[RMDB]
RNA sequence: GGGAACGACUCGAGUAGAGUCGAAAAGUGGCGAAAGCGCCUCAGGAAGACGGAUCCGACGGUGAGGGACGAAAGCUCGGGUCACGAACCGGAUUAGAUACCCGGGUAGUCCGAGCUGUAAACGAUGCUUACCCAUUCUGUUCGCAGAAUGGGUAAGAAAAGAAACAACAACAACAAC
Reactivity to DMS in 0.01 (KOAc 150mM, MgCl2 10mM, bicine 150mM(pH8.5), 24C), signal-to-noise 2, nucleotides 027 to 126: g000u020g000g000c030g020a110a070a100g020c070g010c010c000u010c090a050g010g020a110a090g000a040c090g010g020a090u010c040c040g020a140c100g020g020u000g020a110g010g010g000a040c090g000a110a120a040g010c000u000c000g000g000g000u020c230a050c060g010a090a300c000c000g000g000a040u000u000a100g000a160u020a070c180c000c000g010g010g010u000a140g010u000c000c000g000a030g000c020u000g010u000a020a020a080c120g000a080u020g020

This 177-nucleotide RNA was probed chemically with DMS. Conditions: 150 mM KOAc, 10 mM MgCl2 and 150 mM bicine (pH 8.5), 24 C. For DMS, 1,219 sequencing reads were counted.